An RNA of 177 nucleotides, treated with 2A3 and DMS and read out base by base. The DMS profile rests on 1,534 reads. For 2A3, 1,224 sequencing reads were counted. It was measured as part of the RMDB library RFM100. DMS adducts were read by reverse transcription with MarathonRT.
RNA sequence: GGGAACGACUCGAGUAGAGUCGAAAAAGGAAGAGAUCGUCCGUAGUAGCAAGCUGCUGGAGGGUAUCUCGGUCAGCAUCUCGAUUGGCAAGACGUCCACUCCGGGUACGCGCCGCUCAUGCGAUGAAGAUUCUUCUUGCUUCGGCAAGAAGAAUCUAAAAGAAACAACAACAACAAC
Reactivity to 2A3 in 0.01 (KOAc 150mM, MgCl2 10mM, bicine 150mM(pH8.5), 24C), signal-to-noise 3, nucleotides 027 to 126: a000g080g030a040a040g010a000g030a060u040c080g080u000c050c060g010u040a020g020u030a010g070c070a130a030g000c040u060g020c020u060g050g030a060g050g010g010u020a030u100c020u000c010g000g000u020c000a010g000c070a070u020c040u070c070g180a240u050u070g010g000c050a060a040g040a050c050g030u060c020c000a140c060u050c040c000g020g000g000u040a000c100g020c030g000c000c000g030c010u070c020a020u060g030c010g100a020u020g040a000
Reactivity to DMS in 0.01 (KOAc 150mM, MgCl2 10mM, bicine 150mM(pH8.5), 24C), signal-to-noise 1, nucleotides 027 to 126: a100g000g020a140a110g050a140g000a010u000c080g050u000c000c000g000u000a080g000u020a040g000c140a140a140g000c000u000g000c060u020g000g020a020g000g040g070u000a050u030c070u000c080g010g000u000c020a070g000c110a170u070c040u080c020g000a070u000u000g000g010c020a010a030g020a020c220g010u010c060c020a110c130u000c010c000g070g000g000u000a010c140g050c020g000c070c020g000c040u000c040a080u030g000c020g000a060u000g020a200